[RMDB]
RNA sequence: GGGAACGACUCGAGUAGAGUCGAAAAGAAACUGCAACGUGGCAGAAACACGAAAGCUAGCGAAACAAAAGACGCUGCAACGAGCUGGUAGCGUCAAACAGCUCGAAAACAAGCUAGCGAAAAGAAAGGGUAUGUGUAUCUUCGGAUACACAUACCCAAAAGAAACAACAACAACAAC
Reactivity to DMS in 0.01 (KOAc 150mM, MgCl2 10mM, bicine 150mM(pH8.5), 24C), signal-to-noise 1, nucleotides 027 to 126: g000a030a040a040c000u000g120c010a110a100c030g000u000g070g000c000a060g000a090a040a140c020a000c160g000a020a130a110g050c000u000a000g000c000g000a010a090a040c140a010a140a070a110g000a040c150g000c010u000g190c150a150a070c000g000a000g000c010u020g000g010u000a040g000c060g000u000c010a050a040a220c120a090g020c070u010c070g000a020a090a030a060c070a100a090g000c030u000a000g010c000g000a160a140a030a040g050a060a000a300
Reactivity to 2A3 in 0.01 (KOAc 150mM, MgCl2 10mM, bicine 150mM(pH8.5), 24C), signal-to-noise 1, nucleotides 027 to 126: g010a000a040a000c040u050g060c150a090a050c010g180u090g040g000c020a020g140a170a050a000c020a040c020g130a220a010a000g000c000u000a000g000c000g110a120a020a000c070a000a210a000a000g040a000c070g000c030u090g030c060a250a000c030g120a030g120c040u060g140g000u050a070g020c050g080u050c030a000a000a100c060a000g030c010u050c030g170a080a050a000a000c020a020a000g000c000u030a020g050c000g000a000a110a000a000g080a070a000a000